[RMDB]
RNA sequence: GGGAACGACUCGAGUAGAGUCGAAAAUUCUCAGCACUCAUCAAGAAGUAGGCUUAGGCCAAUUGCUAGGUGGUGAAAGUAGAGGGAAGGUAGCACUUCGACGCCUCUAAGUACGCUGUGGGAGUAGAAAACUGGACAUCGUUCGCGAUGUCCAGAAGUUAGGGUUCAUGUUCGCAUGAACCCUAACAAAAGAAACAACAACAACAAC
Reactivity to 2A3 in 0.01 (KOAc 150mM, MgCl2 10mM, bicine 150mM(pH8.5), 24C), signal-to-noise 1, nucleotides 027 to 156: u080u020c000u010c020a010g010c020a020c040u140c010a140u060c080a150a080g100a120a000g070u090a030g030g010c020u080u070a040g000g090c010c000a050a110u110u050g020c030u040a040g000g070u060g010g010u080g020a110a100a030g070u050a010g000a080g020g050g030a010a060g040g010u030a030g030c040a040c050u020u000c020g070a040c080g060c000c010u030c010u010a010a000g050u020a020c050g000c080u010g000u030g050g000g000a060g030u110a040g050a100a100a030a080c000u000g000g010a000c010a000u000c000g060u080u050c140g000c010g030a010u000g000u000c000c000a000g000a000a000
Reactivity to DMS in 0.01 (KOAc 150mM, MgCl2 10mM, bicine 150mM(pH8.5), 24C), signal-to-noise 1, nucleotides 027 to 156: u030u010c000u000c000a110g020c040a050c090u000c030a070u000c020a110a090g000a050a060g080u000a090g000g030c020u000u000a160g060g050c010c010a080a090u000u000g010c040u010a040g020g060u000g000g020u000g000a080a030a090g050u000a040g000a040g030g010g010a110a040g050g000u010a090g020c130a110c090u000u010c030g000a090c080g030c030c000u010c000u000a050a130g030u000a020c080g040c010u010g000u000g000g000g030a230g000u000a090g020a070a070a080a160c000u000g010g010a040c000a020u000c000g000u010u020c210g010c000g030a010u020g050u010c000c000a000g000a020a030